[RMDB]
Source: RMDB library OK3TST, as collected in RNAgym. Structure probing data (2A3 and DMS) for a 207-nucleotide construct. In probing experiments dimethyl sulfate is read out at A N1 and C N3, which are open when not base-paired. The DMS profile rests on 7,221 reads.
RNA sequence: GGGAACGACUCGAGUAGAGUCGAAAAUCUAUGUGCAUUUCUGCUUUUUGCUGCUAGGUACGAAUUCGAAACUGACGGACUCGUCGCUAUCGCUCUCUUCUUUGGCGUCAUUAAAGUAAUUAGAGUUUCUCUCUCCAGAGUUGGCGGCUCCUUUGGCUCUACUAGGUAAAUUCGUUUACCUAGUAGAAAAAGAAACAACAACAACAAC
Reactivity to 2A3 in 0.01 (KOAc 150mM, MgCl2 10mM, bicine 150mM(pH8.5), 24C), signal-to-noise 3, nucleotides 027 to 156: u060c040u050a120u150g050u030g050c030a050u020u120u010c030u040g000c000u050u080u020u110u090g040c050u020g000c010u010a030g020g070u060a040c030g050a090a070u100u100c040g030a110a060a060c080u110g050a040c060g000g050a040c020u020c060g020u020c050g010c080u040a040u140c040g040c010u030c000u020c000u080u010c000u070u050u040g030g020c030g030u020c030a040u070u150a100a080a050g040u060a100a120u120u120a050g000a020g070u030u080u030c040u000c000u000c000u030c040c020a010g010a000g080u060u080g050g010c010g030g020c020u050c010c010u100u110u100g070g000c060
Reactivity to DMS in 0.01 (KOAc 150mM, MgCl2 10mM, bicine 150mM(pH8.5), 24C), signal-to-noise 2, nucleotides 027 to 156: u000c030u000a070u000g010u000g020c050a100u000u000u000c040u000g000c030u020u000u010u000u010g010c010u000g030c030u000a050g030g010u000a060c040g000a050a100u000u000c030g000a110a090a130c070u020g030a140c050g030g010a050c040u000c020g010u000c050g040c040u000a050u000c040g010c030u000c020u010c020u000u000c030u000u000u000g020g000c080g030u010c040a100u000u010a040a040a120g010u000a060a110u010u010a130g000a120g020u010u000u000c040u000c010u000c030u000c010c050a090g000a140g010u000u000g030g030c020g020g000c020u010c010c000u000u020u000g010g030c140

Description:
Conditions: 150 mM KOAc, 10 mM MgCl2 and 150 mM bicine (pH 8.5), 24 C.